RNA sequence: GGGAACGACUCGAGUAGAGUCGAAAAUGGGGUUUCAGCACGUGCCCAGGCUGGUCUCAAACUCCUGGGCUCAAGUAAUUCACCCACCUUGGCCUCCUAAAGUGCUGAGAUUACAGGCAUGAGCCACCACACCUGGCUAUCAUCCUCUUUAGAUAUACCAUCCACUAUAGUUCGCUAUAGUGGAUGGAAAAGAAACAACAACAACAAC
Reactivity to 2A3 in 0.01 (KOAc 150mM, MgCl2 10mM, bicine 150mM(pH8.5), 24C), signal-to-noise 1, nucleotides 027 to 156: u040g000g000g000g000u030u070u010c010a000g010c000a000c020g040u050g000c000c000c000a000g020g060c150u120g050g070u090c030u030c120a060a260a010c020u000c030c010u000g010g000g000c030u000c000a020a000g030u000a010a060u100u140c000a050c060c000c000a010c000c000u000u070g030g010c000c030u050c030c010u150a110a090a020g010u020g000c000u000g030a000g000a090u130u120a050c040a040g020g020c040a010u060g010a000g040c030c010a040c000c000a100c000a000c020c040u030g040g060c010u020a040u080c010a040u000c020c000u120c090u080u120u140a080g060a160u140a040u000a220